[RMDB]
RNA sequence: GGGAACGACUCGAGUAGAGUCGAAAAGAGCGGUUGUAGCGAGCGCAUCCGACUGACCUUAUAUAUCCGGAUAUAUGGCUGGAUCUUUUCUAUUGCUGGUUCAACCGGGUGACUAGGAUCGCGGUUAGAACUAAUCGCUCUUCGGAGCGAUUAGUUCAAAAGAAACAACAACAACAAC
Reactivity to DMS in 0.01 (KOAc 150mM, MgCl2 10mM, bicine 150mM(pH8.5), 24C), signal-to-noise 1, nucleotides 027 to 126: g000a020g030c170g040g040u030u010g000u120a070g000c050g000a000g090c080g000c070a020u010c020c010g110a170c260u000g000a060c010c000u010u000a010u010a150u100a010u000c170c040g000g010a130u000a140u160a070u030g000g020c000u020g000g000a030u030c240u040u000u030u020c000u060a040u000u000g020c070u000g000g000u000u000c000a110a100c100c040g030g000g000u000g000a210c140u030a100g000g000a050u000c000g060c060g000g050u000u000a100
Reactivity to 2A3 in 0.01 (KOAc 150mM, MgCl2 10mM, bicine 150mM(pH8.5), 24C), signal-to-noise 2, nucleotides 027 to 126: g080a010g000c030g010g000u040u020g030u060a070g010c070g000a040g100c030g000c000a080u020c000c030g050a080c060u110g100a100c010c000u050u070a070u010a030u000a010u170c040c020g050g000a050u040a020u010a050u140g160g010c010u050g020g030a060u060c040u120u220u180u000c090u140a190u080u250g090c130u090g000g010u100u150c010a070a080c010c000g000g010g000u020g000a020c040u060a000g060g080a030u000c020g020c060g060g010u000u080a060